[RMDB]
RNA sequence: GGGAACGACUCGAGUAGAGUCGAAAAGCUGAGAAAUUCGUUUCUCAGCACUGGAAAUAAAGCCGAAAGCCUAGCCAUUCCUUAUUUGGCGAAAGCCUGGCAUGAGCCUCCACUUCGGUGGAGGCAAUAUUCUUGCUUUGUUCGCAAAGCAAGAAUAAAAAGAAACAACAACAACAAC
Reactivity to 2A3 in 0.01 (KOAc 150mM, MgCl2 10mM, bicine 150mM(pH8.5), 24C), signal-to-noise 2, nucleotides 027 to 126: g000c000u000g000a000g020a020a040a020u070u090c160g060u070u020u000c000u000c000a000g030c000a030c010u050g020g100a000a170a120u180a120a150a050g020c010c000g120a170a010a000g010c020c010u010a010g010c010c020a040u080u090c040c000u220u200a220u230u170u030g000g010c000g000a030a000a000g010c000c000u010g000g020c030a030u120g040a030g010c010c000u000c000c000a010c000u040u050c150g120g000u000g000g000a020g000g000c030a000a000
Reactivity to DMS in 0.01 (KOAc 150mM, MgCl2 10mM, bicine 150mM(pH8.5), 24C), signal-to-noise 3, nucleotides 027 to 126: g000c010u000g010a010g000a000a010a010u000u010c160g030u000u010u000c000u000c000a000g010c000a010c080u000g000g010a070a070a100u030a080a130a060g010c010c000g010a110a130a100g020c020c000u000a300g010c000c000a030u000u010c230c190u000u010a100u000u000u000g000g010c000g030a120a150a090g010c010c090u020g000g030c000a100u000g000a120g020c000c010u000c000c000a010c010u010u000c120g000g000u010g020g010a000g020g000c000a010a020